The record gives the reactivity of an RNA of 207 nucleotides to 2A3. Values cover nucleotides 27 to 156.

RNA sequence: GGGAACGACUCGAGUAGAGUCGAAAAUUACGCUUUAGCUGCCUAAAAACAGUUAGCGUAGAUCCUCUCGGCAUCGCCCAUGUGCUCGAGUAAGGGUCCUAACUUUAGUGGGAUACGUUUCAACUUUCCGUCUGUAAGUUGAAAAAGAGAACAUCAGCGUCUAGUCACUGUUCGCAGUGACUAGACGAAAAGAAACAACAACAACAAC
Reactivity to 2A3 in 0.01 (KOAc 150mM, MgCl2 10mM, bicine 150mM(pH8.5), 24C), signal-to-noise 1, nucleotides 027 to 156: u030u020a000c000g010c020u110u080u190a020g000c010u030g000c030c010u130a080a050a010a010a010c000a000g010u050u040a000g000c010g000u020a020g000a030u040c000c000u010c000u000c000g010g000c000a000u020c000g000c000c000c000a010u020g000u000g010c090u110c250g000a000g000u010a060a130g030g000g000u030c010c020u100a180a230c110u230u230u150a010g010u000g000g000g010a000u000a010c000g010u000u000u000c000a000a000c010u000u010u020c070c060g140u070c060u060g040u020a000a000g000u000u000g060a000a000a000a000a000g030a010g060a040a050c070a150u210c060a010g070